RNA sequence: GGGAACGACUCGAGUAGAGUCGAAAAUCCUAAGUCCUAUCGGACCGUAGCACUUGGAUUUACCACUGGAGUAUCGGAAACGAUACUAUGAAGGUGGUUGUCAGUGCUACUAGUACGAUAGGAUAUGGAAAAAGCUAACCCGUUCGCGGGUUAGCAAGGUUAGAAGCUGGUUCGCCAGCUUCUAACCAAAAGAAACAACAACAACAAC
Reactivity to 2A3 in 0.01 (KOAc 150mM, MgCl2 10mM, bicine 150mM(pH8.5), 24C), signal-to-noise 2, nucleotides 027 to 156: u050c010c010u000a100a040g060u000c000c000u000a000u000c010g020g000a010c000c030g000u000a000g010c000a010c020u040u170g210g020a050u300u270u170a020c000c000a000c000u010g020g090a010g000u000a010u000c000g000g020a050a110a060c010g010a010u010a010c000u020a300u080g040a000a010g030g000u000g020g010u000u010g000u010c000a000g000u000g010c000u000a000c000u000a000g000u000a010c000g020a000u010a010g010g010a000u000a010u010g000g060a100a140a000a030a000g010c020u030a010a000c000c020c000g000u030u030c180g000c010g030g000g000u010u010a000g010c000a000a030